[RMDB]
RNA sequence: GGGAACGACUCGAGUAGAGUCGAAAAGCCCCACGCUUCGGCGUGGGGCAAAUAAAAUCAGCGGUAAGCUGGCGUAAAAUAUUACCGCUCAACGCCAGCUUAAAACACCCUUGUUCGCAAGGGUGAACUAAACUUUAAUCUUCGGAUUAAAGUUUAGAAAAGAAACAACAACAACAAC
Reactivity to DMS in 0.01 (KOAc 150mM, MgCl2 10mM, bicine 150mM(pH8.5), 24C), signal-to-noise 2, nucleotides 027 to 126: g010c000c010c000c040a030c010g050c000u000u020c180g020g020c000g090u000g010g030g020g020c000a000a020a020u000a070a080a090a110u000c070a050g010c080g010g010u000a020a020g010c000u000g020g020c000g000u000a060a080a050a080u000a080u010u000a150c080c050g000c060u010c140a120a020c000g010c000c010a000g010c010u000u010a020a040a110a160c000a000c000c000c000u000u000g010u000u010c160g010c010a010a010g000g000g000u000g010a030a090
Reactivity to 2A3 in 0.01 (KOAc 150mM, MgCl2 10mM, bicine 150mM(pH8.5), 24C), signal-to-noise 2, nucleotides 027 to 126: g000c060c000c030c030a000c030g050c050u080u110c290g180g000c000g020u000g020g000g010g020c020a000a010a000u010a000a020a000a060u110c050a030g040c040g060g070u060a020a000g000c000u000g000g000c000g010u060a120a180a120a070u200a090u140u150a070c020c020g010c040u060c070a030a000c000g000c000c010a000g000c000u000u020a000a010a010a020c000a010c010c010c000u000u030g040u060u040c190g020c100a000a000g010g010g000u000g000a000a010